[RMDB]
RNA sequence: GGGAACGACUCGAGUAGAGUCGAAAAAUAAAUCUAAAAUGGUUUUCACUCAGGUGAGAGGCACCGCAGGGAAAACCAACUCAUCCAUCCCAAGGAAGUGAGAGCAAGAGAGCGGGAGGAGAAAAAAUCAUAAUUACCGUUUCGACGGUAAUUAUGAAAAAGAAACAACAACAACAAC
Reactivity to 2A3 in 0.01 (KOAc 150mM, MgCl2 10mM, bicine 150mM(pH8.5), 24C), signal-to-noise 1, nucleotides 027 to 126: a020u010a000a060a020u050c040u160a040a000a060a160u050g000g000u020u000u020u030c030a010c020u060c020a050g000g060u010g020a300g040a200g170g180c000a030c020c040g030c130a050g050g020g000a000a000a010a010c030c020a000a010c010u000c030a070u040c030c000a040u000c000c010c010a020a030g020g000a000a060g030u020g030a040g010a010g050c010a040a100g080a050g000a010g160c100g010g010g000a010g040g010a000g100a070a140a000a010a060a020
Reactivity to DMS in 0.01 (KOAc 150mM, MgCl2 10mM, bicine 150mM(pH8.5), 24C), signal-to-noise 2, nucleotides 027 to 126: a120u030a080a030a080u030c080u030a040a050a060a130u000g010g000u000u000u000u000c010a040c020u010c270a200g000g010u000g010a250g010a140g010g000c010a010c000c050g020c300a030g000g010g000a000a010a020a020c010c020a030a060c060u010c020a020u010c010c040a090u010c010c010c010a200a080g000g000a050a030g000u000g010a010g000a080g010c100a100a050g000a010g000a060g010c050g000g030g010a030g000g010a110g030a000a010a070a080a100a070
This 177-nucleotide RNA was probed chemically with 2A3 and DMS. Source: RMDB library M2PK90, as collected in RNAgym.